[RMDB]
Source: RMDB library RNAMAK, as collected in RNAgym. An RNA of 207 nucleotides, treated with 2A3 and read out base by base. Conditions: 150 mM KOAc, 10 mM MgCl2 and 150 mM bicine (pH 8.5), 24 C. Values cover nucleotides 27 to 156.

RNA sequence: GGGAACGACUCGAGUAGAGUCGAAAAGGGGUCAGGUCUUUCUCCUGAGUAGGACCGAUAAGAUACUGAAGCCUCCACGGUAUCUUUUGACGGUCCGCAGAUACAGGGAAAGACCUGACGGAGGCACCCAAAAUAUCCACGUUUCGACGUGGAUAAACUAGUAGUUGACGUUCGCGUCAACUACUAGAAAAGAAACAACAACAACAAC
Reactivity to 2A3 in 0.01 (KOAc 150mM, MgCl2 10mM, bicine 150mM(pH8.5), 24C), signal-to-noise 2, nucleotides 027 to 156: g110g020g060g020u000c010a000g010g000u000c020u020u010u010c150u080c020c050u080g070a080g160u250a180g020g010a010c010c000g010a010u040a090a020g010a000u000a000c000u010g030a210a040g040c000c000u000c000c000a030c000g000g000u000a000u030c030u010u010u000u120g290a140c000g000g000u000c000c000g000c000a000g010a040u300a150c090a040g010g000g000a000a000a010g010a000c000c000u000g000a000c000g000g000a000g000g000c010a040c030c000c020a060a130a000a030u100a010u000c000c000a000c000g000u020u090u100c300g150a020c000g000u000g000g010a000u000a000a000a010